Overview:
Source: RMDB library OK2TST, as collected in RNAgym. This 177-nucleotide RNA was probed chemically with 2A3 and DMS. The RNA was probed in 150 mM KOAc, 10 mM MgCl2 and 150 mM bicine (pH 8.5) at 24 C. For 2A3, 1,829 sequencing reads were counted.

RNA sequence: GGGAACGACUCGAGUAGAGUCGAAAACAAAUUGGCCAGACUGGCCAGAGGAGAGAGGCAUUGUAUGACAUAAUGCCGUGCUCUGAACCAGUGCCCUCUCUUGGGGCCAGCACUAGUAGACAGGUUCUACUGGGGUAAGGUUCGCCUUACCCCAGUAAAAAGAAACAACAACAACAAC
Reactivity to 2A3 in 0.01 (KOAc 150mM, MgCl2 10mM, bicine 150mM(pH8.5), 24C), signal-to-noise 2, nucleotides 027 to 126: c030a000a080a080u190u150g100g000c050c020a010g060a160c000u000g000g020c000c000a000g000a020g010g000a010g000a000g020a060g000g010c010a020u020u000g010u030a130u120g050a020c020a040u150a080a160u300g130c060c030g000u010g010c020u000c000u030g040a090a110c080c000a020g020u020g010c010c000c000u020c000u020c000u000u030g100g000g030g000c000c000a000g000c020a020c030u070a010g080u020a010g030a090c120a140g010g160u070u030c020
Reactivity to DMS in 0.01 (KOAc 150mM, MgCl2 10mM, bicine 150mM(pH8.5), 24C), signal-to-noise 3, nucleotides 027 to 126: c070a080a110a130u000u000g010g030c000c040a080g000a160c040u010g020g000c000c000a050g000a040g010g000a040g000a020g000a140g020g020c000a000u000u000g010u010a160u010g010a070c090a030u000a070a120u020g030c170c110g020u000g000c130u000c020u000g010a100a180c300c020a030g000u000g000c000c010c000u000c010u000c010u000u000g010g020g010g000c020c000a010g000c040a110c040u040a030g020u000a030g010a070c100a110g010g010u000u000c060